Description:
This 177-nucleotide RNA was probed chemically with 2A3 and DMS. Values cover nucleotides 27 to 126. The RNA was probed in 150 mM KOAc, 10 mM MgCl2 and 150 mM bicine (pH 8.5) at 24 C.
[RMDB]
RNA sequence: GGGAACGACUCGAGUAGAGUCGAAAAGAGCUUUUUUUCGAAAAAGCUCCGGCGCAAUGCCUAUGUGUACACUUCACAAGGGUUUGUGGUGGUCAAUGGGAAUACCAGCAAUCUUCGGAUUGCUGAAGACAAGCAUUCAAUUCGUUGAAUGCUUGUCAAAAGAAACAACAACAACAAC
Reactivity to 2A3 in 0.01 (KOAc 150mM, MgCl2 10mM, bicine 150mM(pH8.5), 24C), signal-to-noise 3, nucleotides 027 to 126: g000a000g020c000u060u020u020u020u010u010u100c100g050a020a020a000a000a010g010c010u010c020c030g090g040c030g010c040a090a080u190g070c010c020u090a190u130g100u010g020u040a070c110a080c210u090u130c020a020c030a080a130g110g000g020u050u110u050g020u020g030g160u010g030g040u040c060a050a090u040g020g000g100a120a040u100a170c060c030a010g000c000a000a010u000c010u050u070c160g110g020a000u010u000g000c000u010g010a010a000
Reactivity to DMS in 0.01 (KOAc 150mM, MgCl2 10mM, bicine 150mM(pH8.5), 24C), signal-to-noise 4, nucleotides 027 to 126: g000a020g010c000u000u000u000u000u000u000u010c120g010a010a010a010a000a010g010c000u010c000c050g010g000c060g030c080a090a040u010g030c020c010u010a100u010g020u000g000u010a090c200a120c160u000u010c020a020c070a050a300g010g010g000u000u000u000g030u000g010g020u010g000g010u000c070a060a050u010g000g000g010a130a090u000a080c170c010a010g020c000a000a000u000c000u000u000c160g020g000a010u000u000g000c000u010g000a050a080